[RMDB]
RNA sequence: GGGAACGACUCGAGUAGAGUCGAAAAAUACUUCAACUGUCGGCGGGACAUCUCCCCCAAGUGAAACGCCGAUCAAGGUACCGAAGGACCGCGUGCCUUAGUUUUACUCCUAAUGGUCUUAACCCGGACACCACAUUAUUUUCGAAUAAUGUGGUGUAAAAGAAACAACAACAACAAC
Reactivity to 2A3 in 0.01 (KOAc 150mM, MgCl2 10mM, bicine 150mM(pH8.5), 24C), signal-to-noise 9, nucleotides 027 to 126: a000u100a030c030u060u090c030a130a060c050u080g020u030c000g000g000c000g000g020g020a020c020a070u050c150u130c050c010c000c000c000a030a030g020u020g040a050a020a010c000g000c000c000g010a020u060c030a030a030g040g000u030a040c020c060g050a070a060g050g020a020c020c020g020c040g030u020g000c000c000u030u020a040g020u010u050u070u080a090c050u050c020c000u080a100a080u160g020g010u010c000u060u080a060a070c010c020c000g020g020
Reactivity to DMS in 0.01 (KOAc 150mM, MgCl2 10mM, bicine 150mM(pH8.5), 24C), signal-to-noise 9, nucleotides 027 to 126: a080u020a070c090u010u010c110a080a080c120u010g010u010c010g010g010c000g020g010g010a300c020a020u010c050u030c040c000c010c010c020a120a150g020u000g000a020a190a200c020g000c010c010g000a030u020c140a090a040g010g000u010a030c110c030g000a080a090g010g000a080c040c040g010c130g010u000g010c010c010u010u010a030g000u000u010u010u010a080c110u010c030c030u000a060a080u030g010g000u010c030u000u010a090a120c030c010c030g010g010

Source: RMDB libraries RFM100 and RFMREP, as collected in RNAgym. Chemical mapping of a 177-nucleotide RNA with 2A3 and DMS.